[RMDB]
RNA sequence: GGGAACGACUCGAGUAGAGUCGAAAAGAUAUGGAAUACUCAGUUGGGAGCAGACUAUUCGGAAACGAAUAGCUGCAUCGAUCAACUGAGGUAUUCCUAAGUCAAAAUCACCUCUUCGGAGGUGAAACCUAACCAUACGCUUCGGCGUAUGGUUAGGAAAAGAAACAACAACAACAAC
Reactivity to DMS in 0.01 (KOAc 150mM, MgCl2 10mM, bicine 150mM(pH8.5), 24C), signal-to-noise 1, nucleotides 027 to 126: g000a020u000a300u010g000g030a050a000u000a000c000u000c000a000g010u000u030g020g020g010a030g010c010a020g010a120c000u000a010u000u000c020g030g000a160a160a190c000g020a000a010u010a020g060c000u000g020c000a070u000c190g010a100u030c010a010a040c010u000g020a020g020g000u000a000u000u010c010c010u020a010a140g010u010c010a030a060a070a180u000c020a020c020c000u010c010u000u000c220g040g010a000g000g020u000g000a000a020a080
Reactivity to 2A3 in 0.01 (KOAc 150mM, MgCl2 10mM, bicine 150mM(pH8.5), 24C), signal-to-noise 2, nucleotides 027 to 126: g000a020u040a050u210g000g010a000a010u010a020c000u000c020a010g000u000u000g010g000g080a050g000c030a010g150a300c020u020a020u000u010c000g050g030a070a060a050c050g000a000a000u020a000g000c010u000g000c000a090u130c010g050a140u100c000a020a020c000u030g000a020g000g000u000a000u000u000c000c000u000a200a010g010u000c040a080a020a000a300u040c010a000c020c030u060c000u050u100c300g210g010a000g000g020u000g030a000a000a000